[RMDB]
RNA sequence: GGGAACGACUCGAGUAGAGUCGAAAACGCAAAGCUGCAGCGCGGCGCUCUGGAGGCCUUGCCCCGCGCACGGCUCUUUACAUGGCCCGACGUGAGGGCACUUCGCGGGCAGUGCUGCGGCCUCGUGAAACUGCCCCUAAGUUCGCUUAGGGGCAAACAACAAUCAGGUCUUCGGACCUGAUUGUUGAAAAGAAACAACAACAACAAC
Reactivity to 2A3 in 0.01 (KOAc 150mM, MgCl2 10mM, bicine 150mM(pH8.5), 24C), signal-to-noise 1, nucleotides 027 to 156: c020g050c010a040a000a040g000c000u000g000c000a000g000c000g040c000g300g070c050g020c090u030c080u180g030g000a030g000g020c070c060u050u080g020c030c000c000c020g000c000g020c030a020c020g010g060c030u080c020u190u120u110a120c050a190u260g000g000c010c000c000g060a100c000g030u000g000a300g000g000g000c000a000c000u020u020c000g020c090g120g000g000c000a000g000u000g020c020u000g000c000g000g000c000c000u000c000g030u020g040a150a010a040c050u070g020c000c040c000c000u000a000a000g040u040u090c110g090c140u000u000a000g020g000g010g020c000a000a000a000